[RMDB]
RNA sequence: GGGAACGACUCGAGUAGAGUCGAAAAGCGCUGCGGAGUGGAGAGACUGGUGUACGCCAGUACGUCGAGCGUCUACGGGCUCAACGAGAAGGUCCCGUUCUCCGAGCGGGAUGGGGUCGAUCAUCCGAUGGACUGUUCGAUUCGUCGAACAGUCCAUAAAAGAAACAACAACAACAAC
Reactivity to DMS in 0.01 (KOAc 150mM, MgCl2 10mM, bicine 150mM(pH8.5), 24C), signal-to-noise 1, nucleotides 027 to 126: g020c010g020c030u000g010c020g000g000a100g030u000g020g010a130g000a170g010a020c000u010g010g000u000g000u000a060c210g010c020c000a020g030u000a010c030g030u000c030g000a070g000c010g000u010c040u000a140c240g010g020g010c010u000c010a090a070c040g010a120g000a100a240g000g000u000c020c010c000g000u010u000c000u000c110c120g010a070g020c000g010g000g000a020u010g000g030g000g020u000c030g000a170u010c100a050u020c020c000g010
Reactivity to 2A3 in 0.01 (KOAc 150mM, MgCl2 10mM, bicine 150mM(pH8.5), 24C), signal-to-noise 2, nucleotides 027 to 126: g000c000g030c110u300g280c110g090g030a060g060u230g030g090a200g010a020g010a010c010u020g010g010u040g080u150a060c190g010c000c010a000g000u020a010c030g020u040c020g010a010g000c020g020u000c040u060a050c130g060g030g000c010u000c050a000a040c020g010a000g000a120a040g190g000u000c010c000c000g030u040u000c120u070c060c160g050a000g030c020g010g010g010a050u070g000g010g020g020u040c050g020a090u030c000a050u010c010c010g000
Structure probing data (DMS and 2A3) for a 177-nucleotide construct. The 2A3 profile rests on 1,287 reads. The reactions ran in a buffer of 150 mM KOAc, 10 mM MgCl2 and 150 mM bicine (pH 8.5), at 24 C.